An RNA of 177 nucleotides, treated with DMS and 2A3 and read out base by base. 2A3 adducts were read by reverse transcription with SuperScript II with manganese. The RNA was probed in 150 mM KOAc, 10 mM MgCl2 and 150 mM bicine (pH 8.5) at 24 C. For 2A3, 489 sequencing reads were counted. For DMS the reverse transcriptase was MarathonRT.
[RMDB]
RNA sequence: GGGAACGACUCGAGUAGAGUCGAAAAACAGCAAAACAAAGACCAACAUAUCCACACACCAAACUGUUUGAUUCACAUCACACCCAAAUACAAACGGUUUAAAAAAGAGGAUGCUUUCAAAAUUUCAUUGGUAAUUCAGUUUCGACUGAAUUACCAAAAAAGAAACAACAACAACAAC
Reactivity to DMS in 0.01 (KOAc 150mM, MgCl2 10mM, bicine 150mM(pH8.5), 24C), signal-to-noise 2, nucleotides 027 to 126: a050c070a060g000c090a020a020a040a060c080a040a040a080g000a130c040c010a030a100c100a040u040a130u000c000c000a080c030a060c150a060c080c130a020a010a010c020u030g050u000u070u000g010a120u000u000c040a010c060a030u000c100a060c110a090c050c000c040a030a060a030u050a140c090a060a060a090c060g020g020u000u000u070a000a100a050a060a020a030g000a100g000g010a050u030g000c120u000u030u030c020a080a070a030a140u010u000u010c080a090
Reactivity to 2A3 in 0.01 (KOAc 150mM, MgCl2 10mM, bicine 150mM(pH8.5), 24C), signal-to-noise 2, nucleotides 027 to 126: a000c070a000g110c030a040a040a010a030c030a000a100a000g050a010c010c060a010a080c020a020u070a020u000c030c000a020c000a000c000a000c020c070a070a000a000c000u020g030u030u010u000g040a100u040u050c060a010c010a090u010c000a020c010a120c090c010c000a020a110a000u260a140c000a000a070a000c010g000g070u020u010u040a030a160a050a000a000a000g080a000g040g010a070u020g010c030u030u120u150c160a080a030a110a190u080u160u060c070a080